[RMDB]
RNA sequence: GGGAACGACUCGAGUAGAGUCGAAAAGUUACCAUUACUGAUGGCAGUGAUAAGAACUCACCUGUUCUUAGAGCCAAACCCUUGAAACAGCUCGAUUUUUUGAAGAGAGGUUUCAGGGUUGAAAGUGUACAAUGCUAACGUUCGCGUUAGCAUUGUAAAAAGAAACAACAACAACAAC
Reactivity to DMS in 0.01 (KOAc 150mM, MgCl2 10mM, bicine 150mM(pH8.5), 24C), signal-to-noise 5, nucleotides 027 to 126: g010u010u010a130c030c010a190u000u020a060c080u000g000a170u000g000g000c000a180g020u010g010a130u000a000a010g000a010a010c010u000c260a130c300c250u010g000u000u000c000u010u000a020g000a150g020c010c020a080a070a040c010c000c000u000u020g010a000a010a010c010a020g020c010u000c010g000a080u000u000u000u010u030u010g000a160a170g000a030g000a010g020g020u000u000u000c000a030g000g000g010u000u010g010a030a060a100g000u000g010
Reactivity to 2A3 in 0.01 (KOAc 150mM, MgCl2 10mM, bicine 150mM(pH8.5), 24C), signal-to-noise 2, nucleotides 027 to 126: g010u010u120a090c020c000a030u110u160a060c050u090g160a120u050g020g040c000a030g170u020g160a130u030a030a030g000a000a010c010u030c120a230c090c060u040g010u010u010c000u010u000a030g000a010g000c010c030a010a010a020c020c000c000u010u190g010a010a010a000c000a000g010c020u000c020g080a180u070u100u110u110u200u300g050a140a040g000a000g000a000g000g060u000u000u000c000a000g000g020g000u020u020g010a000a000a020g010u050g000

Source: RMDB library OK2TST, as collected in RNAgym. An RNA of 177 nucleotides, treated with DMS and 2A3 and read out base by base.